[RMDB]
RNA sequence: GGGAACGACUCGAGUAGAGUCGAAAAUAAGAUUUGUUAGUUCGGAGAUCCGACAUGCUGUCAAAUUUGGGAUAGCCACAAGUAGGAUAGAUGACCCACUAGAUGACAUUGAUGAGAGCGAAUGGGGAACAACAGACAAAUUCGUUUGUCUGUUGUUAAAAGAAACAACAACAACAAC
Reactivity to 2A3 in 0.01 (KOAc 150mM, MgCl2 10mM, bicine 150mM(pH8.5), 24C), signal-to-noise 5, nucleotides 027 to 126: u150a040a030g090a110u080u080u150g050u050u090a120g020u060u040c040g010g050a090g030a130u050c010c000g020a020c030a030u110g030c010u020g010u030c020a070a140a240u090u110u080g110g000g020a040u060a050g030c030c010a070c010a110a050g040u100a030g030g030a030u020a060g090a030u090g040a030c000c000c010a030c050u050a020g030a150u070g020a020c020a060u060u130g040a060u090g050a080g010a010g050c010g030a050a030u090g000g000g000g010
Reactivity to DMS in 0.01 (KOAc 150mM, MgCl2 10mM, bicine 150mM(pH8.5), 24C), signal-to-noise 9, nucleotides 027 to 126: u010a090a120g010a130u000u000u000g010u000u000a090g010u010u000c040g010g000a230g010a070u000c020c020g010a080c290a070u000g000c040u000g000u000c030a050a070a140u000u010u010g010g010g000a070u000a060g010c030c100a060c100a050a090g010u000a050g000g010a090u000a060g010a130u000g000a120c020c010c030a070c100u000a080g010a090u010g000a060c050a060u000u000g010a080u000g010a090g000a060g010c030g000a040a050u010g010g000g000g000
Conditions: 150 mM KOAc, 10 mM MgCl2 and 150 mM bicine (pH 8.5), 24 C.
Structure probing data (2A3 and DMS) for a 177-nucleotide construct.
DMS adducts were read by reverse transcription with MarathonRT.
It was measured as part of the RMDB library OK2TRN.